[RMDB]
Notes:
Chemical mapping of a 207-nucleotide RNA with DMS and 2A3. For 2A3 the reverse transcriptase was SuperScript II with manganese. The reactions ran in a buffer of 150 mM KOAc, 10 mM MgCl2 and 150 mM bicine (pH 8.5), at 24 C. Source: RMDB library OK3TST, as collected in RNAgym. DMS (dimethyl sulfate) methylates the pairing face of unpaired adenines and cytosines. For 2A3, 3,109 sequencing reads were counted. Values cover nucleotides 27 to 156. 2A3 is a SHAPE reagent: it acylates the 2'-hydroxyl of flexible nucleotides of all four kinds.
RNA sequence: GGGAACGACUCGAGUAGAGUCGAAAAUGUGGCUAGUAGAUGGUCCAAUCAUGCCUCUAUUUAUGAAGACCCCAAGUACUCAGGUUAAUGUGGGAAAAUCAAAGGCUCUGUCUGGAAAAUGUUGCCAUUAGCAUUGGCCUAGCAAAAGAGAAGGAGACAUUACGAGUAUGUUCGCAUACUCGUAAUGAAAAGAAACAACAACAACAAC
Reactivity to DMS in 0.01 (KOAc 150mM, MgCl2 10mM, bicine 150mM(pH8.5), 24C), signal-to-noise 3, nucleotides 027 to 156: u010g040u000g010g020c000u000a120g030u000a090g010a100u000g020g020u010c060c020a090a140u010c080a100u010g010c040c000u000c020u010a080u000u010u010a070u020g020a130a130g000a230c020c010c020c010a060a150g050u000a090c060u000c060a050g040g020u000u000a050a090u020g010u010g000g010g000a050a040a060a110u000c040a050a140a100g020g020c040u010c070u010g020u000c040u000g000g000a090a050a090a120u000g020u000u000g000c000c040a130u010u000a180g030c080a150u000u000g010g010c030c030u000a060g010c060a040a020a070a140g020a060g000a040a050g040g000a130g000a170
Reactivity to 2A3 in 0.01 (KOAc 150mM, MgCl2 10mM, bicine 150mM(pH8.5), 24C), signal-to-noise 4, nucleotides 027 to 156: u150g010u040g020g010c020u020a030g010u030a060g130a160u090g040g020u050c030c040a030a090u120c030a040u160g030c030c000u030c020u060a130u050u180u020a130u130g060a100a030g050a070c010c010c000c010a030a010g050u040a060c040u060c110a020g030g060u050u050a090a030u110g030u090g070g000g000a060a050a020a060u050c040a050a030a060g020g000c010u000c040u100g060u020c040u030g050g010a040a070a070a100u090g040u070u060g030c010c010a030u070u060a030g040c040a030u000u050g020g000c010c010u020a020g000c030a030a060a060a010g020a020g010a060a010g030g020a020g000a010